An RNA of 177 nucleotides, treated with DMS and 2A3 and read out base by base. The reactions ran in a buffer of 150 mM KOAc, 10 mM MgCl2 and 150 mM bicine (pH 8.5), at 24 C. DMS adducts were read by reverse transcription with MarathonRT.

RNA sequence: GGGAACGACUCGAGUAGAGUCGAAAAAUGAGGGAUGAGAUUGCGAGAACGGUGAGAGCUUAUAGCAAAGGAUUCUUCCUUGAAUGUUUGCUAGGUGAUAAGGAGUGGGAAACUCAUUAUGCGACGGACACGCAUGUCACUUCGGUGACAUGCGUGUAAAAGAAACAACAACAACAAC
Reactivity to DMS in 0.01 (KOAc 150mM, MgCl2 10mM, bicine 150mM(pH8.5), 24C), signal-to-noise 2, nucleotides 027 to 126: a080u010g020a090g000g020g020a060u000g020a090g000a120u000u020g000c080g020a120g000a090a070c110g010g000u000g000a150g010a160g010c030u010u000a120u000a020g010c030a030a020a010g010g000a060u000u020c060u000u020c140c140u020u020g000a040a060u000g000u000u000u000g040c030u000a030g010g020u010g010a110u000a070a080g000g010a090g010u010g000g000g000a110a110a060c040u010c020a050u030u000a080u000g010c050g010a120c180g020g010
Reactivity to 2A3 in 0.01 (KOAc 150mM, MgCl2 10mM, bicine 150mM(pH8.5), 24C), signal-to-noise 1, nucleotides 027 to 126: a000u250g030a020g000g040g010a010u080g040a080g040a050u060u110g040c050g000a040g060a140a000c030g040g020u020g000a090g000a050g000c000u110u060a070u060a060g000c030a060a000a000g140g040a060u040u030c040u080u130c000c140u030u090g080a080a020u160g060u080u020u040g020c010u010a020g070g060u070g010a050u030a020a070g060g020a020g010u100g000g000g000a060a000a000c010u020c050a010u000u200a040u090g080c060g010a010c010g070g000
Reactivities are rounded to 0.1 and cut off at 0 and 3.